[RMDB]
RNA sequence: GGGAACGACUCGAGUAGAGUCGAAAAAGCACCUCGAGUGAGGCAAUAGCUACCGAAAUACAUGAUUGGAUUUCUGGGCUCGUUCGAGGGCCUCAUCCGUAGCUUUGCGAAUCGGCCCGUGCCACAGGAACGCUGCUUCGUUCGCGAAGCAGCGUUCAAAAGAAACAACAACAACAAC
Reactivity to 2A3 in 0.01 (KOAc 150mM, MgCl2 10mM, bicine 150mM(pH8.5), 24C), signal-to-noise 2, nucleotides 027 to 126: a020g040c030a080c040c010u000c000g000a070g120u170g010a000g010g110c080a050a020u120a190g080c100u060a120c010c010g050a000a020a000u160a120c110a070u300g040a080u100u300g140g040a000u060u010u010c060u130g000g040g000c010u010c120g080u110u030c090g090a230g000g050g000c000c010u200c090a190u100c100c070g040u040a010g000c000u020u030u260g040c000g090a060a070u140c000g070g000c000c000c000g010u040g000c010c050a150c040a020g300